An RNA of 177 nucleotides, treated with 2A3 and DMS and read out base by base. The RNA was probed in 150 mM KOAc, 10 mM MgCl2 and 150 mM bicine (pH 8.5) at 24 C. For 2A3, 3,753 sequencing reads were counted. For 2A3 the reverse transcriptase was SuperScript II with manganese.

[RMDB]
RNA sequence: GGGAACGACUCGAGUAGAGUCGAAAAGAAUAGGCGAAACUCUCUCGACGCCGAAAGCUACGAAAAAUCUCAGAAAAUGAGAUGAACGUGUGUACGAAGUGAGAGAGACACACGGAAAAGUAGCGAAGGGUACUUACAAGUUCGCUUGUAAGUACCCAAAAGAAACAACAACAACAAC
Reactivity to 2A3 in 0.01 (KOAc 150mM, MgCl2 10mM, bicine 150mM(pH8.5), 24C), signal-to-noise 3, nucleotides 027 to 126: g120a080a070u110a050g000g020c010g030a050a060a030c050u090c000u000c010u010c020g060a020c010g000c030c000g010a050a060a000g010c000u000a000c000g070a230a000a000a000a000u010c000u000c000a040g170a020a300a090a120u040g000a010g000a010u000g000a010a000c000g000u000g000u000g000u020a070c040g060a110a060g100u130g040a050g000a010g000a000g000a030c000a000c000a000c000g000g000a040a090a000a040g010u000a000g000c000g000a050a010
Reactivity to DMS in 0.01 (KOAc 150mM, MgCl2 10mM, bicine 150mM(pH8.5), 24C), signal-to-noise 3, nucleotides 027 to 126: g010a080a070u020a130g000g000c000g000a110a060a050c060u020c010u000c000u000c010g010a300c020g000c000c000g020a060a080a100g010c010u000a000c000g020a030a060a060a140a030u000c000u000c000a010g000a040a070a090a120u000g000a000g000a010u010g000a050a090c000g000u000g000u010g000u000a060c120g000a100a220g000u020g000a060g000a010g010a040g020a000c010a000c000a010c000g000g000a030a060a050a140g020u000a000g010c010g000a070a120